RNA sequence: GGGAACGACUCGAGUAGAGUCGAAAAACGCGCAGUGGGGCAUGCCGAGCUUAGUGUGCUCGUAAAACUGACUAAAACAAACUAACUGCAAACGACGAACGUUUCGCACUCGCUGCUUAAUAACCAGUGAGCCCUACAACAGCAGGCCGAUGGGCUGGUUCAUUAUGUUCUUCGGAACAUAAUGAACAAAAGAAACAACAACAACAAC
Reactivity to 2A3 in 0.01 (KOAc 150mM, MgCl2 10mM, bicine 150mM(pH8.5), 24C), signal-to-noise 4, nucleotides 027 to 156: a000c100g040c010g010c030a020g020u030g040g020g000g000c030a020u080g030c000c000g020a000g000c010u020u050a020g010u010g110u140g040c000u000c000g050u040a010a010a010a020c010u010g050a010c020u060a070a020a060a070c070a060a040a040c040u110a060a010c050u050g020c030a030a020a020c020g090a000c050g040a200a030c030g030u020u020u040c070g000c010a010c020u010c000g010c000u000g000c000u020u000a050a020u060a050a030c010c000a000g000u010g030a000g000c020c010c000u060a070c040a130a010c010a040g050c000a010g010g030c010c010g070a080u130g010g040g000c010u040g040
Reactivity to DMS in 0.01 (KOAc 150mM, MgCl2 10mM, bicine 150mM(pH8.5), 24C), signal-to-noise 2, nucleotides 027 to 156: a080c060g010c050g020c030a110g030u000g040g020g000g050c020a050u010g040c090c000g010a040g020c060u000u000a100g020u000g060u020g000c000u000c030g020u000a040a050a080a080c040u000g030a080c080u000a060a110a060a120c090a040a070a100c080u020a070a050c050u010g000c030a030a060a100c050g020a100c080g000a060a120c100g020u000u000u000c050g010c050a080c020u000c030g000c010u000g000c010u000u020a100a100u010a100a040c200c000a080g010u000g000a060g030c020c020c000u000a130c030a060a060c040a070g000c030a030g020g030c040c010g000a130u000g000g010g010c010u040g010
The record gives the reactivity of an RNA of 207 nucleotides to 2A3 and DMS. Conditions: 150 mM KOAc, 10 mM MgCl2 and 150 mM bicine (pH 8.5), 24 C. For DMS the reverse transcriptase was MarathonRT. It was measured as part of the RMDB library RSTRND.